[RMDB]
RNA sequence: GGGAACGACUCGAGUAGAGUCGAAAAGACCUUAACUUCGGUUAAGGUCAAAGUGCACUGAGCAGCGAAAGAAACGCUGCAAGCCGCAGUGCACGGCAAUAAAAAGGGUGUUCUUCGGAACACCCAAGCUUAGCAAUAGCUUCGGCUAUUGCUAAGCAAAAGAAACAACAACAACAAC
Reactivity to DMS in 0.01 (KOAc 150mM, MgCl2 10mM, bicine 150mM(pH8.5), 24C), signal-to-noise 2, nucleotides 027 to 126: g000a010c000c000u000u000a000a000c000u000u000c150g040g010u000u000a010a000g010g030u000c000a000a020a020g020u000g010c000a000c000u000g010a120g000c010a020g000c000g020a160a220a170g010a140a140a120c020g020c000u010g030c020a060a070g010c190c090g000c020a010g010u010g010c000a000c000g010g000c160a110a050u010a020a020a020a090a070g000g000g000u000g000u000u000c000u000u010c190g000g000a010a010c000a020c010c000c000a010a000
Reactivity to 2A3 in 0.01 (KOAc 150mM, MgCl2 10mM, bicine 150mM(pH8.5), 24C), signal-to-noise 2, nucleotides 027 to 126: g000a000c000c000u000u010a000a000c000u030u050c220g090g000u000u030a000a010g000g000u010c000a000a000a000g000u000g000c010a010c020u040g030a020g020c000a000g020c010g080a090a230a150g130a150a180a000c020g000c000u010g000c010a020a000g060c020c030g020c030a000g000u000g020c000a000c000g000g050c040a050a080u180a210a080a030a020a010g000g000g000u000g000u000u000c000u030u040c200g080g010a000a020c000a000c000c000c000a000a000